Structure probing data (2A3 and DMS) for a 177-nucleotide construct. The DMS profile rests on 1,605 reads. Source: RMDB library OK1LIB, as collected in RNAgym.

[RMDB]
RNA sequence: GGGAACGACUCGAGUAGAGUCGAAAACAGCUAGCUGGGAGAGGCAAGUGACUUGUCUAAGGUCACACAGCUGGUGAGCAGCAGAGCGUGGGUUCAGACCCAGGUGGAGCUGGCUGCUAGCUCAGGGGUUGACUGGCAUGUUCGCAUGCCAGUCAACAAAAGAAACAACAACAACAAC
Reactivity to 2A3 in 0.01 (KOAc 150mM, MgCl2 10mM, bicine 150mM(pH8.5), 24C), signal-to-noise 3, nucleotides 027 to 126: c020a000g080c040u070a010g000c000u040g000g100g000a170g060a060g110g050c090a030a130g010u020g030a040c000u070u060g060u180c060u280a100a030g070g000u000c010a000c000a000c020a040g010c000u000g040g050u120g040a020g000c010a010g010c040a020g040a000g110c100g000u040g010g010g000u080u150c110a110g040a300c010c010c020a020g000g140u170g000g190a040g050c000u050g090g030c000u000g050c000u010a030g000c000u050c070a020g000g000g130
Reactivity to DMS in 0.01 (KOAc 150mM, MgCl2 10mM, bicine 150mM(pH8.5), 24C), signal-to-noise 1, nucleotides 027 to 126: c300a100g010c030u000a020g050c030u030g040g000g010a240g000a120g000g000c190a150a130g010u000g000a030c050u030u020g000u020c090u010a060a000g000g000u000c020a010c000a100c100a080g030c030u000g000g040u020g000a000g000c000a030g010c000a020g000a080g000c000g070u000g010g000g000u000u010c220a300g000a220c020c010c000a040g010g020u000g030g010a170g000c000u000g020g020c010u020g040c020u030a130g000c000u010c020a040g000g000g060